[RMDB]
RNA sequence: GGGAACGACUCGAGUAGAGUCGAAAAUAAGCACUUUUCUAUGAUGAUACUGUCUGAUGACGGUGUCGUUUGCUAUAAUAGUGAUUAUGCAGCUAAGGGUUACAUUGCUGGAAUACAGAAUUUUAAGACGCAGGCAGGUUCGCCUGCCUGAAAAGAAACAACAACAACAAC
Reactivity to DMS in 0.01 (KOAc 150mM, MgCl2 10mM, bicine 150mM(pH8.5), 24C), signal-to-noise 4, nucleotides 027 to 129: u040a070a040g000c050a000c000u000u000u000u000c100u000a050u060g000a000u000g010a030u040a050c010u020g000u010c020u020g050a000u120g020a050c000g020g050u030g050u010c000g000u010u030u060g060c100u050a060u030a040a050u050a070g020u030g020a060u010u030a050u000g010c100a000g060c060u030a070a090g020g030g010u050u050a100c210a060u050u040g020c030u040g000g050a100a090u060a100c080a060g020a080a050u020u040u040u010a100a100g010a140c210g000
Reactivity to 2A3 in 0.01 (KOAc 150mM, MgCl2 10mM, bicine 150mM(pH8.5), 24C), signal-to-noise 5, nucleotides 027 to 129: u090a000a010g040c000a040c020u070u050u070u030c040u070a110u110g020a010u010g000a000u020a000c000u000g040u000c010u130g160a180u300g000a030c010g030g000u000g000u000c000g020u000u010u090g010c060u030a010u040a170a100u090a030g020u020g040a020u010u090a040u080g020c000a000g000c070u040a070a040g070g000g030u090u090a030c020a040u070u080g000c010u000g030g040a020a000u110a080c050a030g080a070a050u080u060u030u100a110a090g030a010c040g020